The data come from the RNA Mapping Database (RMDB), library PDB130. Structure probing data (2A3) for a 207-nucleotide construct.
RNA sequence: GGGAACGACUCGAGUAGAGUCGAAAAGCCGCGUGAGUGAAGAAGGUUUUCGGAUCGUAAAACUCUGUUGGUAGAGAAGAACGUUGGUGAGAGUGGAAAGCUCAUCAAGUGACGGUAACUACCCAGAAAGGGACGGCUAACUACGUGCCAGCAGCCGGUGGCGACAUAUGUUCGCAUAUGUCGCCACAAAAGAAACAACAACAACAAC
Reactivity to 2A3 in 0.01 (KOAc 150mM, MgCl2 10mM, bicine 150mM(pH8.5), 24C), signal-to-noise 2, nucleotides 027 to 156: g000c020c010g000c010g050u080g050a060g000u020g020a040a070g010a000a030g110g020u020u010u030u130c160g040g020a040u010c030g020u070a000a060a080a040c020u010c030u040g070u120u060g040g020u060a020g000a010g020a140a050g030a040a040c080g040u030u020g000g000u030g010a020g000a030g040u140g030g080a110a060a010g000c000u010c020a030u000c000a030a030g060u060g100a020c010g000g000u020a090a030c010u030a030c000c030c000a030g100a030a080a020g030g000g060a050c020g010g010c000u010a030a020c020u080a010c030g050u060g020c030c010a050g000c000a000g020c080c000g020
The RNA was probed in 150 mM KOAc, 10 mM MgCl2 and 150 mM bicine (pH 8.5) at 24 C.